An RNA of 207 nucleotides, treated with 2A3 and read out base by base. Reactivities are given for positions 27 through 156. The reactions ran in a buffer of 150 mM KOAc, 10 mM MgCl2 and 150 mM bicine (pH 8.5), at 24 C. 2A3 adducts were read by reverse transcription with SuperScript II with manganese.
[RMDB]
RNA sequence: GGGAACGACUCGAGUAGAGUCGAAAAGUUCUUCUUUUCCUCUCCUCGUCUUCCUUGGUCAACCUCUUAAGUUCCUCUUCCUCUUCCUUGCUGAGGUUCUUCCCUCCUCCGGAGAGCUGUUUCUUCUUGUUCUCGAGGGCCUUCCUUCUUCGGUGGUACUUUUCUUAUCGUUCGCGAUAAGAAAAGUAAAAGAAACAACAACAACAAC
Reactivity to 2A3 in 0.01 (KOAc 150mM, MgCl2 10mM, bicine 150mM(pH8.5), 24C), signal-to-noise 1, nucleotides 027 to 156: g000u040u270c040u260u190c000u010u100u000u000c020c000u000c020u020c000c010u010c010g010u020c040u070u000c030c000u010u060g090g020u110c090a070a070c030c040u120c060u180u250a090a040g020u040u000c030c010u030c030u030u060c000c010u000c020u090u110c030c050u030u120g030c060u050g050a010g090g000u060u040c020u030u030c010c000c000u010c000c000u000c020c020g000g040a020g000a010g020c010u000g080u150u020u000c000u050u000c020u040u140g110u070u070c100u020c070g060a090g000g070g000c000c000u030u050c020c000u050u120c040u040u080c010g100g010u050g010g050u010